[RMDB]
RNA sequence: GGGAACGACUCGAGUAGAGUCGAAAAGAAUUGGUAUGUAAGCUACUUCUUCCAGUAGCUGCGUCAUAACAUCAAGGUUAUGCAUACUGAGCCGAAGCUCAGCUUCGGUCCUCAAAGGAAGACCAAAUACAGCUCAGCCCGUUCGCGGGCUGAGCAACAAAUUCAAAGUGUUCGCACUUUGAAUUUGAAAAGAAACAACAACAACAAC
Reactivity to DMS in 0.01 (KOAc 150mM, MgCl2 10mM, bicine 150mM(pH8.5), 24C), signal-to-noise 2, nucleotides 027 to 156: g020a110a060u010u000g010g020u000a010u010g010u000a300a300g030c010u000a020c010u000u000c010u000u000c030c040a300g030u000a010g040c010u010g080c050g010u000c000a030u000a040a030c000a300u000c230a120a120g000g000u000u030a010u000g000c000a010u000a000c010u000g010a170g010c040c000g000a010a040g000c000u010c200a190g010c010u010u040c010g030g010u000c030c010u000c020a020a100a180g030g030a070a030g000a280c100c040a060a060a080u000a050c070a140g000c010u000c010a050g010c010c000c010g040u010u010c300g030c040g010g020g010c000u000g000a000g030c000a020a030
Reactivity to 2A3 in 0.01 (KOAc 150mM, MgCl2 10mM, bicine 150mM(pH8.5), 24C), signal-to-noise 2, nucleotides 027 to 156: g060a020a090u020u010g000g000u010a000u000g000u000a010a000g010c000u010a000c010u080u090c010u020u000c020c010a010g000u000a010g010c010u010g000c000g010u000c010a000u000a020a000c010a030u270c250a140a030g260g000u000u000a000u000g000c010a000u000a020c000u010g000a000g010c000c000g010a000a000g010c030u080c300a030g010c000u020u000c000g010g010u000c000c020u090c080a130a080a010g000g000a010a000g000a000c030c080a000a080a010u190a090c090a040g000c000u000c000a010g000c010c000c000g010u090u100c140g020c030g060g000g000c010u000g000a000g000c000a000a000